The record gives the reactivity of an RNA of 207 nucleotides to 2A3 and DMS. For 2A3 the reverse transcriptase was SuperScript II with manganese.

RNA sequence: GGGAACGACUCGAGUAGAGUCGAAAAGGGGGCGACCUGGCUUCGACGCGGGUAGCAAAACCUAAGGGGCAUGCCGAGGUGCAGUGACCUCGUUAAUCACGCUGCAACAUUAUAGUUGCCAACGACGACAACUACGCACUCGCUGCUUAAAACCCAGCUAAAGUCUAUUCUUCGGAAUAGACUUUAGAAAAGAAACAACAACAACAAC
Reactivity to 2A3 in 0.01 (KOAc 150mM, MgCl2 10mM, bicine 150mM(pH8.5), 24C), signal-to-noise 3, nucleotides 027 to 156: g000g010g000g030g000c000g000a000c000c010u100g250g000c030u100u120c080g040a020c040g010c000g040g000g000u000a030g000c030a020a100a110a170c000c000u040a070a040g050g010g030g000c060a020u130g040c120c090g020a040g010g030u040g020c050a040g010u000g000a050c020c000u000c000g010u020u120a130a110u120c060a020c130g020c100u090g020c000a000a010c000a020u250u300a100u170a210g000u010u000g020c040c030a050a020c050g020a000c020g000a010c020a100a040c020u020a030c030g000c020a010c000u030c000g010c000u020g000c000u010u000a090a180a030a040c000c010c010a000g030
Reactivity to DMS in 0.01 (KOAc 150mM, MgCl2 10mM, bicine 150mM(pH8.5), 24C), signal-to-noise 2, nucleotides 027 to 156: g010g030g020g030g000c010g000a040c020c010u000g020g000c000u000u000c300g040a140c210g020c040g020g000g020u010a050g050c030a090a040a120a150c050c020u020a130a060g010g000g030g030c060a090u010g030c040c030g040a040g050g000u000g020c000a160g020u000g000a080c080c000u020c040g010u000u000a070a080u010c040a180c030g010c050u000g030c050a090a040c020a150u020u000a130u000a080g000u000u000g020c020c020a010a060c140g000a200c040g000a050c020a020a060c010u000a080c070g000c070a100c070u000c050g030c010u020g020c020u010u000a020a090a090a300c000c000c020a170g010
The 2A3 profile rests on 1,368 reads. Reactivities are given for positions 27 through 156. The RNA was probed in 150 mM KOAc, 10 mM MgCl2 and 150 mM bicine (pH 8.5) at 24 C.